[RMDB]
RNA sequence: GGGAACGACUCGAGUAGAGUCGAAAAGAAUUACCAAUGAAAUUGGUCACUUAUUUUAUUGGUUCGAUUUAUAGUGAAUGCUGUAUUACGUAUACAAAGAAAUUUUCAUCUCGAAUAAAACGCCGUAGUUGACAAAGGUUCAAUUUAAAAUUGAAUGCGAACAUCUUUACUUCGGUAAAGAUGUUCGAAAAGAAACAACAACAACAAC
Reactivity to 2A3 in 0.01 (KOAc 150mM, MgCl2 10mM, bicine 150mM(pH8.5), 24C), signal-to-noise 1, nucleotides 027 to 156: g020a040a080u300u150a030c000c000a000a000u000g000a000a000a000u000u000g000g000u010c000a000c000u010u010a000u000u040u000u000a000u000u000g000g000u170u030c010g060a090u090u250u030a060u240a080g020u030g090a090a010u050g030c040u000g040u010a000u080u060a050c120g090u180a000u030a030c040a000a050a020g150a100a190a060u120u170u020u010c010a040u000c030u060c010g000a060a000u080a130a200a090a060c080g040c000c010g090u060a090g010u070u050g040a020c000a030a090a020g040g010u000u000c000a000a000u050u090u200a240a240a100a060u000u030g000a000a000u040g020